Source information
An RNA of 177 nucleotides, treated with DMS and 2A3 and read out base by base. It was measured as part of the RMDB library OK1LIB. For 2A3, 2,669 sequencing reads were counted.

[RMDB]
RNA sequence: GGGAACGACUCGAGUAGAGUCGAAAAAAACAUCUAGCAAAGAAAGUUUCACUCGCAAAGACACUUACGAUCCAGAACGCUAUCUUGGAGGGUGGAGCAGGGUCACUGAAUGAAAUUCUUGACGCACCUUGACAGCUUGAUUCGUCAAGCUGUCAAGAAAAGAAACAACAACAACAAC
Reactivity to DMS in 0.01 (KOAc 150mM, MgCl2 10mM, bicine 150mM(pH8.5), 24C), signal-to-noise 2, nucleotides 027 to 126: a040a010a020c040a030u010c020u020a080g010c150a060a160a060g000a000a040a060g000u000u000u000c010a100c020u000c060g010c220a110a030a020g000a030c110a080c130u010u040a070c110g020a140u010c010c110a040g010a070a020c140g000c100u010a010u000c020u000u010g020g010a300g000g000g000u010g010g020a030g010c040a000g000g000g020u020c000a040c070u000g000a000a020u000g000a020a020a120u010u000c010u000u000g000a050c070g000c050a200c110
Reactivity to 2A3 in 0.01 (KOAc 150mM, MgCl2 10mM, bicine 150mM(pH8.5), 24C), signal-to-noise 4, nucleotides 027 to 126: a000a000a000c060a060u050c060u080a030g050c060a060a000a150g070a060a100a030g040u020u020u030c040a050c020u000c040g030c050a060a110a030g080a030c030a000c080u120u150a020c080g070a050u040c050c010a060g040a150a020c060g010c080u050a070u170c010u090u080g050g000a050g020g030g000u080g030g020a040g020c020a100g020g000g040u010c020a010c120u050g080a040a070u040g040a050a040a070u060u000c030u020u040g020a000c050g030c060a080c000

Values cover nucleotides 27 to 126.